[RMDB]
The data come from the RNA Mapping Database (RMDB), library OK2TST. This 177-nucleotide RNA was probed chemically with 2A3 and DMS. The RNA was probed in 150 mM KOAc, 10 mM MgCl2 and 150 mM bicine (pH 8.5) at 24 C.
RNA sequence: GGGAACGACUCGAGUAGAGUCGAAAAGAGAUUCAUCAAUACCAGUCGACGAGCGCUGCGGUCAGCUUUUAGGUAUAGAUGGAGUCCAUCGUGGCCAGGUGUGCGUUCAGCGUCAGAGAUUCCAUUACAUUAUACGCCUCUUCGGAGGCGUAUAAUGAAAAGAAACAACAACAACAAC
Reactivity to 2A3 in 0.01 (KOAc 150mM, MgCl2 10mM, bicine 150mM(pH8.5), 24C), signal-to-noise 1, nucleotides 027 to 126: g080a010g020a010u060u060c050a070u010c000a090a050u010a030c020c000a010g070u070c060g040a090c050g090a060g050c080g000c050u120g010c010g070g000u030c000a010g010c000u070u060u070u210a080g060g010u030a010u030a130g020a010u040g000g030a000g050u020c020c000a030u090c030g100u080g040g040c010c000a040g100g000u090g000u040g030c010g000u010u110c050a020g000c020g050u000c030a000g030a030g020a180u000u030c000c000a030u050u080a030
Reactivity to DMS in 0.01 (KOAc 150mM, MgCl2 10mM, bicine 150mM(pH8.5), 24C), signal-to-noise 4, nucleotides 027 to 126: g000a110g000a100u000u010c020a020u000c040a130a040u000a070c020c010a090g010u000c090g010a100c080g000a110g010c050g020c070u000g000c050g020g010u000c030a090g000c050u000u010u010u010a080g020g020u010a040u000a070g020a020u000g020g000a070g010u010c010c030a080u010c110g020u010g000g010c020c010a050g010g000u020g000u000g020c060g020u000u020c070a050g000c050g010u000c060a080g010a130g000a120u000u000c020c030a100u010u000a160